Chemical mapping of a 177-nucleotide RNA with DMS. For DMS the reverse transcriptase was MarathonRT. The reactions ran in a buffer of 150 mM KOAc, 10 mM MgCl2 and 150 mM bicine (pH 8.5), at 24 C.

[RMDB]
RNA sequence: GGGAACGACUCGAGUAGAGUCGAAAAUAACAAUACCAGUGAUUCGCAGCCGGUAACAUUUGUGGCGGACAAAGCCUCGGCUCAGGUUGUCCUGCAGAUAUCAAAAGAUGAGAUCACAGGUAAUGGAUGACGGAGUAAUCUUCGGAUUACUCCGUCAAAAAGAAACAACAACAACAAC
Reactivity to DMS in 0.01 (KOAc 150mM, MgCl2 10mM, bicine 150mM(pH8.5), 24C), signal-to-noise 1, nucleotides 027 to 126: u030a100a080c030a050a110u010a040c000c010a180g030u000g000a020u000u000c070g000c030a070g040c050c060g030g000u000a080a040c100a090u020u000u000g010u000g040g010c050g010g000a080c060a060a090a140g010c040c000u010c150g020g010c070u010c100a100g010g030u000u000g000u000c030c010u060g000c030a030g000a000u000a040u020c050a040a130a090a050g020a080u000g000a060g000a010u000c030a010c030a050g020g010u000a020a120u000g000g000a200